[RMDB]
An RNA of 207 nucleotides, treated with 2A3 and DMS and read out base by base. DMS adducts were read by reverse transcription with MarathonRT. For 2A3, 4,758 sequencing reads were counted. The reactions ran in a buffer of 150 mM KOAc, 10 mM MgCl2 and 150 mM bicine (pH 8.5), at 24 C.

RNA sequence: GGGAACGACUCGAGUAGAGUCGAAAAGGACGUGCUGUCGCGUCCGAAUUAACGACAGCAACUAGCCUGUCACCAACCAGGCGAAUUAUGUUGGUGUAAUGAGGCGAAAGCCUCUAUCAGACUGAGACAUAGCAGUCGAAUUAUCUAUGUCAUUAGACGUAUAGCCGAUAUUCGUAUCGGCUAUACGAAAAGAAACAACAACAACAAC
Reactivity to 2A3 in 0.01 (KOAc 150mM, MgCl2 10mM, bicine 150mM(pH8.5), 24C), signal-to-noise 4, nucleotides 027 to 156: g020g000a020c010g020u030g010c000u000g000u010c000g000c000g030u000c010c000g000a010a040u140u070a080a020c000g010a000c000a000g010c020a000a040c040u040a050g000c000c000u020g020u030c020a000c000c000a000a000c000c000a010g040g000c070g020a030a140u270u190a070u170g000u000u000g000g000u000g000u010a070a010u110g000a000g000g040c030g030a110a020a010g000c000c000u030c000u000a020u060c010a010g010a000c000u000g010a000g000a040c000a000u000a000g000c000a010g030u040c080g020a020a020u210u050a040u110c010u000a010u000g020u000c000a010u060u200a080g070a050
Reactivity to DMS in 0.01 (KOAc 150mM, MgCl2 10mM, bicine 150mM(pH8.5), 24C), signal-to-noise 3, nucleotides 027 to 156: g020g000a060c110g030u000g010c010u010g010u000c010g000c000g000u000c280c090g000a050a090u000u010a110a060c000g010a020c040a020g010c050a100a050c130u000a240g030c010c020u000g010u010c020a290c060c060a060a030c120c000a080g000g000c040g000a080a070u010u000a060u000g010u010u000g020g000u000g000u000a100a140u020g010a050g020g010c010g040a110a190a300g010c000c000u010c010u010a040u000c060a190g030a060c010u000g010a220g010a000c010a010u000a010g010c040a090g010u010c000g020a120a110u000u010a060u000c000u000a010u000g010u020c010a220u000u000a090g030a260